This 177-nucleotide RNA was probed chemically with 2A3.
2A3 adducts were read by reverse transcription with SuperScript II with manganese.
RNA sequence: GGGAACGACUCGAGUAGAGUCGAAAAUGGCCCUCUUUGCUUCCUUUUCCCAGAAUCGUUAAGCCCCGACUCCCACUAGCACCUCGUACCAACCUCGCCCCACCCCAUCCUCCUGCCUUCCCGCGCUACUGCCAAUCUUGUUCGCAAGAUUGGCAGUAAAAGAAACAACAACAACAAC
Reactivity to 2A3 in 0.01 (KOAc 150mM, MgCl2 10mM, bicine 150mM(pH8.5), 24C), signal-to-noise 2, nucleotides 027 to 126: u110g080g010c000c010c000u010c020u040u060u100g010c020u040u030c000c010u020u080u020u040c000c000c000a030g040a050a040u100c080g060u080u100a080a010g000c000c000c000c000g060a070c030u010c010c000c030a030c030u000a010g040c010a020c010c010u020c030g010u050a040c040c010a000a020c000c010u000c010g020c030c010c000c000a050c010c000c020c020a020u010c000c010u000c010c010u020g030c000c010u040u000c000c020c000g000c000g000c000u020